[RMDB]
RNA sequence: GGGAACGACUCGAGUAGAGUCGAAAACGACCGCUUAUUUCGGACCAUGUGUUUCGGGGGAAGGCAUGGCUACAUAACGCAUUUCAAAUGGGUCGAAUUGGGGCGUAGAGCGGGGACGGUCCACUGGAGAAUCGACCUCACCUGCGGCACAAGGACGGCUUAACUACCUGUUCGCAGGUAGUUAAGCAAAAGAAACAACAACAACAAC
Reactivity to 2A3 in 0.01 (KOAc 150mM, MgCl2 10mM, bicine 150mM(pH8.5), 24C), signal-to-noise 5, nucleotides 027 to 156: c020g060a050c020c010g020c080u080u090a140u080u170u190c130g080g060a140c030c020a040u030g030u010g030u050u130u170c080g000g000g000g000g020a030a000g060g000c010a010u020g040g000c020u060a010c030a150u140a080a040c070g040c070a050u030u120u180c070a090a050a100u150g040g020g000u030c020g010a040a050u100u110g010g000g000g030c030g020u050a020g010a010g090c010g000g010g000g020a010c030g030g020u020c020c030a050c150u090g030g050a090g060a080a050u070c020g030a060c000c000u030c020a030c000c000u010g000c010g020g000c010a010c020a090a050g040g010a020c030g060
Reactivity to DMS in 0.01 (KOAc 150mM, MgCl2 10mM, bicine 150mM(pH8.5), 24C), signal-to-noise 1, nucleotides 027 to 156: c080g020a260c030c000g030c150u010u000a150u000u010u000c060g000g030a080c030c010a100u000g030u000g120u000u010u020c130g050g010g110g050g090a110a100g010g000c010a060u020g020g010c050u030a080c050a070u000a080a130c040g000c080a120u010u000u020c150a030a120a100u000g010g010g040u000c070g000a050a170u000u000g060g000g060g020c000g040u010a070g010a100g090c020g060g030g000g030a140c080g030g010u000c000c000a230c150u020g010g000a150g020a120a100u000c020g000a100c020c000u000c030a020c040c040u000g000c020g040g050c020a000c000a070a090g050g020a220c070g020
Notes:
Chemical mapping of a 207-nucleotide RNA with 2A3 and DMS. For 2A3 the reverse transcriptase was SuperScript II with manganese. It was measured as part of the RMDB library VIROID. The RNA was probed in 150 mM KOAc, 10 mM MgCl2 and 150 mM bicine (pH 8.5) at 24 C. DMS adducts were read by reverse transcription with MarathonRT. For 2A3, 3,797 sequencing reads were counted.